[RMDB]
An RNA of 170 nucleotides, treated with 2A3 and DMS and read out base by base. The reactions ran in a buffer of 150 mM KOAc, 10 mM MgCl2 and 150 mM bicine (pH 8.5), at 24 C.
RNA sequence: GGGAACGACUCGAGUAGAGUCGAAAAGCACAUUGCCUCCUCUAACGCUUUUCUUGAUUUGAGGACAUCAUGUUUUAGUGUCGCUGCACUUACAACUGGUUUGACUUUUCAAACUGUGCGGCCUGGCUUGGAAUUAACUUCGGUUAAUUCAAAAGAAACAACAACAACAAC
Reactivity to 2A3 in 0.01 (KOAc 150mM, MgCl2 10mM, bicine 150mM(pH8.5), 24C), signal-to-noise 9, nucleotides 027 to 129: g020c010a000c010a060u020u090g010c010c020u020c000c000u010c030u040a060a020c040g070c100u070u120u180u070c070u120u230g150a300u060u020u090g020a020g000g020a010c010a030u070c020a040u140g080u040u060u040u110a070g010u040g040u060c110g040c210u170g000c030a010c000u070u150a060c070a130a050c050u040g020g020u010u010u030g070a100c080u100u120u130u110c010a010a010a000c000u010g000u010g000c000g020g020c000c000u020g050g010c010u020u090g050
Reactivity to DMS in 0.01 (KOAc 150mM, MgCl2 10mM, bicine 150mM(pH8.5), 24C), signal-to-noise 9, nucleotides 027 to 129: g010c030a060c040a070u010u020g000c060c080u010c010c000u000c020u040a040a070c140g020c120u010u040u050u040c060u020u030g060a160u040u030u030g010a040g030g020a060c070a000u030c050a030u050g040u010u000u000u020a050g010u030g000u020c120g010c140u040g000c030a010c040u000u010a080c160a030a020c090u020g000g030u000u010u000g020a060c300u010u020u030u020c020a000a010a020c030u000g000u010g020c050g000g000c020c040u010g010g020c040u080u000g000